Structure probing data (2A3 and DMS) for a 207-nucleotide construct. It was measured as part of the RMDB library OK3TST. The RNA was probed in 150 mM KOAc, 10 mM MgCl2 and 150 mM bicine (pH 8.5) at 24 C. Reactivities are given for positions 27 through 156.
RNA sequence: GGGAACGACUCGAGUAGAGUCGAAAAAGGGGAUCAGCAAACUUUUUCCACAAAGGGCUAGGUAGUAAAUAUUUUCAGCUUUGCAAGCCAUAGAGUUUCUGUUGAUUCUGUUCUUCUAUUACAGAAGCAAACGUAGACAAUACGUGUGUAAAUAGGAGUGGCAUAUUAAUUUCGAUUAAUAUGCCACAAAAGAAACAACAACAACAAC
Reactivity to 2A3 in 0.01 (KOAc 150mM, MgCl2 10mM, bicine 150mM(pH8.5), 24C), signal-to-noise 2, nucleotides 027 to 156: a020g000g000g010g020a030u070c060a010g050c040a030a100a080c000u070u000u050u060u070c090c000a080c120a040a140a120g060g020g030c050u130a040g090g060u030a000g060u020a050a060a120u040a120u060u160u060u130c070a000g030c000u050u080u160g030c020a110a010g000c000c020a020u070a060g120a000g000u000u050u040c050u080g000u050u000g040a090u050u010c010u030g040u070u070c000u040u000c000u020a020u020u090a050c040a060g120a220a000g110c070a130a110a000c010g010u010a000g050a140c060a080a100u010a020c010g000u050g000u000g010u070a030a080a200u040a040g010g050a030
Reactivity to DMS in 0.01 (KOAc 150mM, MgCl2 10mM, bicine 150mM(pH8.5), 24C), signal-to-noise 1, nucleotides 027 to 156: a110g010g000g040g020a050u000c060a110g000c020a030a080a100c030u000u000u010u010u000c010c040a160c040a090a150a180g030g020g000c040u000a060g010g000u000a060g020u000a050a040a120u010a060u000u000u010u000c060a080g030c020u010u000u010g030c040a070a140g050c030c000a110u000a110g010a180g000u000u000u000c090u000g050u000u000g010a100u000u010c010u030g000u000u000c080u000u000c010u010a090u010u000a180c120a100g010a090a190g010c060a030a020a010c000g020u000a040g000a170c140a120a180u000a020c020g010u000g010u000g000u000a020a050a050u000a090g000g000a200